An RNA of 177 nucleotides, treated with 2A3 and DMS and read out base by base. For DMS the reverse transcriptase was MarathonRT. The reactions ran in a buffer of 150 mM KOAc, 10 mM MgCl2 and 150 mM bicine (pH 8.5), at 24 C. The DMS profile rests on 11,291 reads. For 2A3 the reverse transcriptase was SuperScript II with manganese. Source: RMDB library TTRDES, as collected in RNAgym.
[RMDB]
RNA sequence: GGGAACGACUCGAGUAGAGUCGAAAAGAUAUGGACCACCGUAGGGAGCUGCUAUUCGGAAACGAAUAGACAGCGACGAUCUACCGUGGUCCUAAGUCAAAACCCAUAUACGUUCGCGUAUAUGGGAGAUAAGGAGGAUGUUCGCAUCCUCCUUAUCAAAAGAAACAACAACAACAAC
Reactivity to 2A3 in 0.01 (KOAc 150mM, MgCl2 10mM, bicine 150mM(pH8.5), 24C), signal-to-noise 4, nucleotides 027 to 126: g010a000u020a010u070g000g000a000c000c010a010c020c070g010u010a000g030g060g070a120g010c000u010g000c010u000a010u000u000c000g000g010a040a010a020c000g000a010a010u010a020g080a110c010a000g000c010g000a020c020g030a070u000c000u000a010c030c040g010u000g000g010u000c000c000u000a000a010g010u000c010a010a030a080a180c010c000c010a000u010a000u000a000c010g040u020u110c300g000c010g180u010a010u000a000u000g000g010g000a080
Reactivity to DMS in 0.01 (KOAc 150mM, MgCl2 10mM, bicine 150mM(pH8.5), 24C), signal-to-noise 6, nucleotides 027 to 126: g010a020u000a180u020g010g010a010c000c000a010c010c300g010u000a010g010g000g010a090g030c000u000g000c000u000a000u000u000c010g010g000a040a020a090c000g020a010a000u000a010g010a110c010a000g010c000g000a070c300g000a100u010c010u000a010c000c300g010u000g000g000u000c000c000u000a000a030g000u000c020a130a080a140a150c000c000c000a010u000a000u000a000c000g020u000u010c270g030c010g020u000a000u000a010u000g000g000g010a010